[RMDB]
RNA sequence: GGGAACGACUCGAGUAGAGUCGAAAAUGAUAACGGUCAUUUUAGUAGGAUAUACUCUACCAGAGCCCACUUGUAGAGCGAAUUUAAGGGCUUAGCUUAGUGUGUCUUGAUCAUCAGGCUACACCAAAGUGAAUUAAAUUGAUGAAUCUAAGUAUGUGAUUCUAGAGCUGUUCGCAGCUCUAGAAUCAAAAGAAACAACAACAACAAC
Reactivity to 2A3 in 0.01 (KOAc 150mM, MgCl2 10mM, bicine 150mM(pH8.5), 24C), signal-to-noise 1, nucleotides 027 to 156: u020g000a000u150a180a070c080g080g020u010c050a020u000u040u080u160a020g070u000a030g040g030a030u030a010u020a000c000u020c000u000a000c000c060a000g000a000g040c000c000c000a070c020u050u010g000u010a000g000a000g000c000g000a070a050u200u220u220a200a070g040g010g000c030u270u300a010g000c010u070u000a010g020u030g010u000g000u060c000u050u000g050a080u060c020a050u000c000a000g000g060c050u020a000c000a000c030c030a080a000a000g000u060g030a040a010u080u090a040a020a130u090u030g000a010u020g020a100a050u020c060u130a020a160g040u040a120u260g100u050
Notes: The record gives the reactivity of an RNA of 207 nucleotides to 2A3. The reactions ran in a buffer of 150 mM KOAc, 10 mM MgCl2 and 150 mM bicine (pH 8.5), at 24 C.